This 177-nucleotide RNA was probed chemically with DMS and 2A3. The RNA was probed in 150 mM KOAc, 10 mM MgCl2 and 150 mM bicine (pH 8.5) at 24 C. For DMS the reverse transcriptase was MarathonRT. For DMS, 1,894 sequencing reads were counted. It was measured as part of the RMDB library OK1LIB. For 2A3 the reverse transcriptase was SuperScript II with manganese.

RNA sequence: GGGAACGACUCGAGUAGAGUCGAAAAUUUGAUGAAGAAGAUAUCCUGCGUAUCGAAGAGAUCAAGCGCUGGAUAGAGCGCGGUGUAUCAGUAGGGAAAGUCAAAGCGCUGCUGGAGGAUAACCUGCCCACUCCAGUCCUUUCGAGGACUGGAGUGGAAAAGAAACAACAACAACAAC
Reactivity to DMS in 0.01 (KOAc 150mM, MgCl2 10mM, bicine 150mM(pH8.5), 24C), signal-to-noise 2, nucleotides 027 to 126: u060u000u050g000a060u060g000a170a030g000a080a020g000a130u040a040u000c100c000u000g040c010g030u070a010u020c020g000a110a170g000a180g000a020u050c220a080a100g010c100g030c060u010g010g010a080u060a040g000a020g000c020g070c000g030g010u050g000u000a020u000c050a100g010u040a030g000g000g030a040a030a090g000u020c060a060a030a210g000c050g000c080u000g030c050u020g000g040a040g000g000a020u000a040a110c040c000u010g000c060
Reactivity to 2A3 in 0.01 (KOAc 150mM, MgCl2 10mM, bicine 150mM(pH8.5), 24C), signal-to-noise 2, nucleotides 027 to 126: u100u080u040g030a110u090g040a010a100g060a050a000g080a080u030a010u000c000c000u020g000c030g000u030a030u240c080g020a070a080g020a010g010a110u100c110a090a090g050c030g020c130u030g040g100a020u000a020g060a050g100c040g020c100g000g030u080g040u060a130u070c060a030g020u140a190g050g040g000a010a300a000g000u110c080a000a040a030g000c040g020c080u090g000c000u050g070g010a020g000g000a010u020a060a030c010c030u080g000c020